Chemical mapping of a 177-nucleotide RNA with DMS and 2A3. Reactivities are given for positions 27 through 126. The data come from the RNA Mapping Database (RMDB), library TTRDEL. For 2A3, 16,914 sequencing reads were counted.

RNA sequence: GGGAACGACUCGAGUAGAGUCGAAAAGAUAUGGAUCACAGAACUACGAACUACAGCUAUGGGUCGGAAACGACCCAACAAUGCUGCGCUGUGAUCCUAAGUCAAAACGCGCACUUCGGUGCGCGAAGAUAAGUAAUAGCUUCGGCUAUUACUUAUCAAAAGAAACAACAACAACAAC
Reactivity to DMS in 0.01 (KOAc 150mM, MgCl2 10mM, bicine 150mM(pH8.5), 24C), signal-to-noise 6, nucleotides 027 to 126: g000a020u000a100u000g000g000a000u000c000a020c000a000g000a100a140c200u020a210c200g010a110a130c180u010a260c060a010g000c000u010a130u000g010g010g010u000c010g000g010a020a010a060c000g010a010c010c010c010a010a020c080a110a080u000g010c000u000g010c180g000c010u000g000u000g000a010u000c000c000u000a010a060g000u000c010a090a040a110a180c010g000c000g000c000a000c010u000u010c170g020g020u000g010c000g010c000g000a010a030
Reactivity to 2A3 in 0.01 (KOAc 150mM, MgCl2 10mM, bicine 150mM(pH8.5), 24C), signal-to-noise 6, nucleotides 027 to 126: g000a000u010a000u040g000g010a010u000c000a000c010a020g080a210a110c130u290a110c300g190a210a080c120u250a160c260a050g000c010u030a070u150g000g010g000u000c010g000g000a010a010a000c000g000a000c020c020c000a000a000c010a000a010u160g000c030u090g160c100g020c050u000g000u000g000a000u020c000c000u000a010a000g000u000c010a020a020a030a150c020g020c010g000c000a000c010u070u100c300g090g000u010g000c000g010c000g000a010a010